[RMDB]
RNA sequence: GGGAACGACUCGAGUAGAGUCGAAAAGAUAUGGAGUCCCUAAGGAGCGUCCCACCAUCGGAAACGAUGGUGAACCGAACUACUCCGAUGGGACUCCUAAGUCAAAACGUGUCGUUCGCGACACGAACAUUCACCAUGAGUUCGCUCAUGGUGAAUGAAAAGAAACAACAACAACAAC
Reactivity to DMS in 0.01 (KOAc 150mM, MgCl2 10mM, bicine 150mM(pH8.5), 24C), signal-to-noise 5, nucleotides 027 to 126: g010a050u000a300u010g020g030a030g010u000c000c010c000u010a230a290g000g000a010g060c300g020u000c090c060c020a020c000c000a010u000c000g000g000a100a110a170c010g020a010u010g010g000u000g000a020a030c170c230g000a070a060c060u010a150c010u010c000c000g000a250u000g000g000g000a000c000u000c000c000u010a000a050g010u010c010a040a080a110a160c040g010u000g010u000c000g020u000u020c250g020c020g000a010c000a000c010g010a060a100
Reactivity to 2A3 in 0.01 (KOAc 150mM, MgCl2 10mM, bicine 150mM(pH8.5), 24C), signal-to-noise 3, nucleotides 027 to 126: g000a010u060a050u210g000g000a010g000u020c000c010c000u030a090a070g000g020a010g010c010g020u070c020c020c010a010c000c000a010u020c000g010g010a100a050a040c010g000a000u000g000g010u010g000a000a010c060c020g050a080a020c050u170a090c000u150c010c010g000a030u070g000g010g000a000c000u010c000c000u000a000a000g020u000c010a030a020a050a090c020g000u000g000u000c020g020u050u090c300g000c010g110a000c010a000c000g010a030a020

An RNA of 177 nucleotides, treated with DMS and 2A3 and read out base by base. 2A3 adducts were read by reverse transcription with SuperScript II with manganese. In probing experiments dimethyl sulfate is read out at A N1 and C N3, which are open when not base-paired. Conditions: 150 mM KOAc, 10 mM MgCl2 and 150 mM bicine (pH 8.5), 24 C.